[RMDB]
RNA sequence: GGGAACGACUCGAGUAGAGUCGAAAAAAGACCGUACUCUGAACAGAAUCGUUUUAUGAGUACAACCUCUUAAUUGAAAAGAAACCGAGUUUCAAAUCCUGAUGAAGACGGUUGCUUUCUCCGCCCGCUGCUCUUCCCUGUUCGCAGGGAAGAGCAGAAAAGAAACAACAACAACAAC
Reactivity to 2A3 in 0.01 (KOAc 150mM, MgCl2 10mM, bicine 150mM(pH8.5), 24C), signal-to-noise 2, nucleotides 027 to 126: a000a000g060a000c040c100g030u010a000c000u050c000u020g000a000a000c010a020g220a300a220u160c020g000u010u020u020u060a190u080g000a000g020u010a030c000a000a030c000c000u050c000u180u000a220a160u120u140g080a060a000a020a050g050a000a010a010c000c090g000a180g050u000u000u020c110a160a210a140u160c030c010u220g020a090u160g010a090a000g010a000c000g000g000u000u000g060c020u000u000u000c000u030c060c040g040c060c010c020g000
Structure probing data (2A3) for a 177-nucleotide construct.
The 2A3 profile rests on 418 reads.
2A3 is a SHAPE reagent: it acylates the 2'-hydroxyl of flexible nucleotides of all four kinds.
It was measured as part of the RMDB library RFM100.
The reactions ran in a buffer of 150 mM KOAc, 10 mM MgCl2 and 150 mM bicine (pH 8.5), at 24 C.